[RMDB]
RNA sequence: GGGAACGACUCGAGUAGAGUCGAAAAAGGCGGCUGCUGUUGCCGCAGGUACCGUCGCACUGGCCGGUUCGGCGAUGGCUGCGGUGCCGACCGACGUUGCUACCGCCAUGUCCGAUUCGAAGGCGGAUACGCCAUCGCCUUUCGAGGCGAUGGCGUAAAAAGAAACAACAACAACAAC
Reactivity to 2A3 in 0.01 (KOAc 150mM, MgCl2 10mM, bicine 150mM(pH8.5), 24C), signal-to-noise 1, nucleotides 027 to 126: a000g050g000c030g010g030c040u090g000c030u150g110u280u130g030c000c010g000c010a010g010g030u000a010c000c000g000u000c050g000c010a110c030u050g080g050c000c010g080g160u100u300c150g040g000c050g100a100u150g040g000c010u000g010c000g030g000u000g000c020c030g040a030c010c010g010a040c050g220u300u110g010c010u010a070c010c020g000c010c000a070u110g100u000c060c010g030a090u080u090c070g050a130a020g040g020c000g010g000a020
Reactivity to DMS in 0.01 (KOAc 150mM, MgCl2 10mM, bicine 150mM(pH8.5), 24C), signal-to-noise 1, nucleotides 027 to 126: a140g030g010c010g000g020c030u000g020c060u020g000u000u010g000c000c000g040c040a030g000g010u000a040c010c000g070u010c300g020c010a080c060u000g030g000c040c020g040g020u000u010c120g030g010c010g020a070u000g000g010c010u000g010c010g020g010u000g010c050c020g000a070c170c030g010a050c060g010u000u000g000c030u010a100c040c000g020c020c020a090u020g020u000c050c050g000a100u020u010c150g000a120a120g010g010c000g000g000a180